The record gives the reactivity of an RNA of 177 nucleotides to DMS.
DMS adducts were read by reverse transcription with MarathonRT.
It was measured as part of the RMDB library OK2TST.
The RNA was probed in 150 mM KOAc, 10 mM MgCl2 and 150 mM bicine (pH 8.5) at 24 C.
Values cover nucleotides 27 to 126.
RNA sequence: GGGAACGACUCGAGUAGAGUCGAAAAUGGCGGGCCAAGGAGGGCCCUUUGACGCCGAGACCAGACGGGUCUCCUGGGAAACCUUGGUCGCCCACGGCCCGAGCCUCUAUCGCACUUUUGCCGGCAACGCAAAAAGCUGAUUCGUCAGCUUUUUGCGAAAAGAAACAACAACAACAAC
Reactivity to DMS in 0.01 (KOAc 150mM, MgCl2 10mM, bicine 150mM(pH8.5), 24C), signal-to-noise 1, nucleotides 027 to 126: u000g020g000c060g050g000g000c000c000a040a010g040g010a100g070g000g020c030c010c020u010u000u040g010a160c190g040c160c130g000a020g000a020c010c010a210g020a210c300g010g020g000u010c000u000c060c070u010g030g010g010a070a120a070c030c000u000u020g000g010u000c010g010c060c000c080a050c030g010g020c040c000c030g010a130g020c030c020u000c090u000a030u010c100g000c080a080c120u000u000u000u000g000c050c050g000g010c100a140a130